[RMDB]
RNA sequence: GGGAACGACUCGAGUAGAGUCGAAAACACAAGACUAUUCGUCACGAAUGAAUUGGUUAAGUGCUGGUCCAUCAAUGAUUAGCCAAGUUAAUGAAAUCAACAGAUUAAGAAAUGAUAUUCUGCUGCGCCAAGCACUAAUUACUCAAACGCCACGUAGUGCCAUCUACUCCUUCGGGAGUAGAUGGCAAAAAGAAACAACAACAACAAC
Reactivity to 2A3 in 0.01 (KOAc 150mM, MgCl2 10mM, bicine 150mM(pH8.5), 24C), signal-to-noise 1, nucleotides 027 to 156: c090a000c020a010a020g090a050c030u100a080u160u000c080g210u070c060a060c090g010a010a060u000g000a010a030u150u100g050g000u070u100a140a040g030u030g010c090u000g000g020u070c000c050a000u000c020a000a300u140g000a070u090u180a000g090c060c050a070a000g070u130u200a050a000u230g080a140a000a050u020c000a030a180c060a100g000a120u070u300a110a090g090a030a100a050u100g050a000u000a080u080u000c010u030g010c000u000g000c010g000c070c000a060a000g000c000a000c000u000a000a140u030u000a030c000u070c040a100a020a060c000g080c140c000a010c100g070u080a090g020
The record gives the reactivity of an RNA of 207 nucleotides to 2A3. The reactions ran in a buffer of 150 mM KOAc, 10 mM MgCl2 and 150 mM bicine (pH 8.5), at 24 C. It was measured as part of the RMDB library OK3TST.